[RMDB]
RNA sequence: GGGAACGACUCGAGUAGAGUCGAAAAUGUGAUGUGUUCGCACAUCACAAACUACCGAGAAUCAUCCUCGGUAUAAAAGAGGAACCCUUGGAAACAAGGGAAUAAGCCCCUGCUUCGGCAGGGGCAAUAUUCGUGGAUUAUUCGUAAUCCACGAAUAAAAAGAAACAACAACAACAAC
Reactivity to DMS in 0.01 (KOAc 150mM, MgCl2 10mM, bicine 150mM(pH8.5), 24C), signal-to-noise 3, nucleotides 027 to 126: u000g000u000g010a020u010g020u000g010u010u010c220g030c010a010c000a000u010c000a010c020a010a070a080c180u010a060c000c000g000a030g000a140a190u020c180a150u010c110c010u000c000g020g000u010a020u010a040a030a100a090g000a140g030g000a110a100c000c000c020u000u000g000g000a170a120a190c000a000a000g000g010g000a040a020u000a110a110g010c000c010c000c000u000g000c000u000u010c230g000g000c000a010g010g010g000g020c010a000a000
Reactivity to 2A3 in 0.01 (KOAc 150mM, MgCl2 10mM, bicine 150mM(pH8.5), 24C), signal-to-noise 1, nucleotides 027 to 126: u120g000u020g000a020u000g010u020g030u060u020c120g050c040a000c000a000u000c000a000c000a000a050a000c010u020a010c010c010g020a010g020a030a190u170c020a070u080c080c010u000c000g020g030u000a010u040a040a020a020a020g130a040g070g120a080a090c000c000c000u010u030g010g000a030a020a030c000a000a000g010g000g020a000a020u010a010a000g040c020c000c000c020u000g000c000u010u070c150g100g000c000a000g000g080g000g000c030a000a000
This 177-nucleotide RNA was probed chemically with DMS and 2A3. Conditions: 150 mM KOAc, 10 mM MgCl2 and 150 mM bicine (pH 8.5), 24 C.